[RMDB]
RNA sequence: GGGAACGACUCGAGUAGAGUCGAAAAGAUAUGGAGCUGAGCUAGCGUUGAAAUGUGGCUUGGAUUUAACUGUCGGAAACGACAGUUUGUCAGCCACAUCGUACGCGCUUGGACCUCAGCUCCUAAGUCAAAACUUGCGCCCUUCGGGGCGCAAGAAGUUCCAAACAUGGUUCGCCAUGUUUGGAACAAAAGAAACAACAACAACAAC
Reactivity to 2A3 in 0.01 (KOAc 150mM, MgCl2 10mM, bicine 150mM(pH8.5), 24C), signal-to-noise 1, nucleotides 027 to 156: g030a010u040a070u110g000g000a010g000c000u000g010a000g010c010u010a000g000c010g000u060u120g060a080a030a020u010g000u000g030g010c040u130u160g130g010a010u260u300u280a000a000c000u000g000u010c000g050g030a070a050a000c020g000a000c010a010g000u000u020u000g000u000c000a000g000c010c000a000c000a000u010c000g010u050a020c010g010c010g000c020u020u040g010g070a080c020c000u000c000a000g000c000u000c000c000u000a010a000g000u000c010a000a010a040a060c000u030u010g000c000g020c000c000c000u020u050c280g010g050g000g030c000g000c000a000a000g000a020a010